Conditions: 150 mM KOAc, 10 mM MgCl2 and 150 mM bicine (pH 8.5), 24 C. This 177-nucleotide RNA was probed chemically with DMS and 2A3.
RNA sequence: GGGAACGACUCGAGUAGAGUCGAAAAACGGUACCUGCUAGUACAUGACAUGCACUAGGAGUAGUACGUCAUGAGGAUCCAUGCGAUCCACGCAGUACAGCUGUAUAGCUAGCCAUGCUAGGACAUGACUACGACUAUCUUUCGAGAUAGUCGUAGUAAAAGAAACAACAACAACAAC
Reactivity to DMS in 0.01 (KOAc 150mM, MgCl2 10mM, bicine 150mM(pH8.5), 24C), signal-to-noise 9, nucleotides 027 to 126: a090c080g010g010u000a020c100c020u000g000c010u000a080g020u010a120c010a020u000g000a080c060a300u000g020c050a020c000u000a030g010g030a100g010u000a050g010u000a020c040g010u000c030a040u000g010a170g020g000a020u000c010c020a180u010g020c100g010a030u000c000c010a110c190g000c020a040g010u000a050c130a070g010c050u000g000u010a110u000a030g010c010u010a080g010c150c180a060u010g010c010u000a070g010g010a070c080a030u000g000
Reactivity to 2A3 in 0.01 (KOAc 150mM, MgCl2 10mM, bicine 150mM(pH8.5), 24C), signal-to-noise 8, nucleotides 027 to 126: a000c070g040g020u020a020c010c020u020g060c010u040a010g030u060a070c010a020u060g140a040c030a080u090g020c030a010c040u040a040g100g090a070g130u070a020g010u010a030c040g040u010c030a050u060g050a050g050g000a010u000c020c030a160u300g030c130g020a000u000c000c020a020c060g000c000a010g040u090a150c040a100g040c010u020g040u080a070u070a110g030c020u010a010g010c030c040a090u170g000c010u060a050g040g040a030c020a090u140g020
About this RNA
The data come from the RNA Mapping Database (RMDB), library OK2TRN.